Structure probing data (2A3 and DMS) for a 207-nucleotide construct.
2A3 adducts were read by reverse transcription with SuperScript II with manganese.
It was measured as part of the RMDB library OK3TST.
The DMS profile rests on 1,952 reads.
[RMDB]
RNA sequence: GGGAACGACUCGAGUAGAGUCGAAAAAUGAAGAAACGAUGGCCAGACUUUGCAAUUCAAAUAAUGGUGUUUUCCUAAUAGUGUUUAAUAAUAACAGUGUUAUCAUAAUAGUAUGUAUCUUGCUGAGCAUUUAUUAUGUACUAAGUGCUGUGCUAAAGUAUUAGCUGCAGUUCGCUGCAGCUAAUACAAAAGAAACAACAACAACAAC
Reactivity to 2A3 in 0.01 (KOAc 150mM, MgCl2 10mM, bicine 150mM(pH8.5), 24C), signal-to-noise 2, nucleotides 027 to 156: a030u080g010a060a070g020a020a020a000c030g060a040u070g080g050c010c020a030g010a100c030u020u080u100g050c090a090a250u120u150c060a030a100a080u140a100a070u080g030g000u030g030u070u050u060u040c000c040u130a150a050u140a090g030u020g110u090u150u030a110a160u140a030a060u080a040a040c000a000g000u000g080u050u010a050u180c000a000u010a030a010u010a050g150u060a010u040g010u010a290u190c030u050u220g080c170u070g000a000g010c000a000u060u000u000a000u010u000a000u010g040u060a060c010u030a060a080g060u000g140c010u010g020u080g020c030u130a040a130a000
Reactivity to DMS in 0.01 (KOAc 150mM, MgCl2 10mM, bicine 150mM(pH8.5), 24C), signal-to-noise 1, nucleotides 027 to 156: a090u000g000a130a120g000a110a100a080c100g000a170u010g010g010c030c070a080g020a130c110u000u000u000g040c070a100a190u010u020c020a040a090a130u010a060a180u000g000g010u000g030u000u000u010u000c010c010u010a090a140u000a070g030u010g010u010u020u010a100a080u000a030a080u000a090a080c010a060g040u000g000u000u000a070u000c010a040u000a010a040u000a030g010u010a010u000g040u000a040u000c010u000u000g000c170u010g010a140g010c020a030u010u010u000a040u010u000a030u030g020u010a070c120u000a060a090g010u000g010c000u010g040u000g000c030u000a070a100a290